Chemical mapping of a 207-nucleotide RNA with 2A3 and DMS. DMS adducts were read by reverse transcription with MarathonRT. The RNA was probed in 150 mM KOAc, 10 mM MgCl2 and 150 mM bicine (pH 8.5) at 24 C. The data come from the RNA Mapping Database (RMDB), library OK3TST.
RNA sequence: GGGAACGACUCGAGUAGAGUCGAAAAUGUGCAAUUGGUUCAACCACGCAUCAGCUUAGCAUCUGAAUUUCUUGCUGUGGGGAAUUUUCAGUCUGUCUCUUAUGCAUGAAAAAUGGUGUUUGAUCUUCCUGUGAAAUCAGGAGCCAGCAGGAUUUGCAAUGAUCCUCGUAUUCGUACGAGGAUCAUUAAAAGAAACAACAACAACAAC
Reactivity to 2A3 in 0.01 (KOAc 150mM, MgCl2 10mM, bicine 150mM(pH8.5), 24C), signal-to-noise 4, nucleotides 027 to 156: u120g020u020g030c020a070a100u080u070g050g030u070u180c060a100a080c020c010a050c040g030c010a080u040c020a030g040c030u080u140a020g000c010a030u050c010u030g060a170a110u080u000u020c020u040u070g000c020u020g030u100g040g010g010g060a010a050u090u090u110u160c040a030g070u030c070u090g070u020c000u010c000u080u120a040u120g020c020a040u060g040a030a040a030a010a020u100g030g000u040g020u030u050u100g040a040u010c020u050u030c020c000u000g000u010g120a090a040a040u110c020a010g080g000a040g020c030c010a010g010c010a020g020g080a100u100u100u140g040c010
Reactivity to DMS in 0.01 (KOAc 150mM, MgCl2 10mM, bicine 150mM(pH8.5), 24C), signal-to-noise 1, nucleotides 027 to 156: u000g030u000g000c030a070a160u000u000g020g010u000u000c060a120a170c010c010a100c080g000c020a120u010c010a090g000c080u000u000a110g010c060a100u010c030u000g000a090a170u000u010u000c030u000u000g030c040u010g000u000g000g010g040g030a060a070u000u000u020u000c080a080g040u000c060u000g000u000c020u000c010u000u010a140u000g010c010a110u000g000a040a040a070a100a170u000g010g020u010g010u000u000u000g020a070u000c050u000u010c020c030u000g010u020g010a140a100a100u000c010a030g000g000a090g030c000c030a060g020c030a080g000g000a150u000u000u000g050c130